[RMDB]
The data come from the RNA Mapping Database (RMDB), library OK1LIB. Chemical mapping of a 177-nucleotide RNA with 2A3. The 2A3 profile rests on 477 reads. Reactivities are rounded to 0.1 and cut off at 0 and 3. The RNA was probed in 150 mM KOAc, 10 mM MgCl2 and 150 mM bicine (pH 8.5) at 24 C.

RNA sequence: GGGAACGACUCGAGUAGAGUCGAAAACUCACUAGGGAUAACUGGCCUUCUUUGGGCAAUUGGCCGCUUUACCCAGGUUGCCGGAAUUAUUACACCUUAUGACAUCCACCAGUACACCUCUGGGCCAGCGCACUAAGACGUUCGCGUCUUAGUGCGCAAAAGAAACAACAACAACAAC
Reactivity to 2A3 in 0.01 (KOAc 150mM, MgCl2 10mM, bicine 150mM(pH8.5), 24C), signal-to-noise 2, nucleotides 027 to 126: c010u010c020a080c040u110a140g000g000g050a130u070a110a020c020u000g110g000c040c020u100u010c070u060u250u170g080g010g000c040a040a020u130u100g050g000c050c050g010c070u020u050u220a130c010c010c000a000g020g050u000u000g070c000c000g000g110a080a060u080u000a030u090u120a070c000a000c030c000u130u150a210u260g060a020c040a130u040c000c000a020c100c050a000g000u000a020c020a060c040c020u060c020u060g150g000g000c000c040a030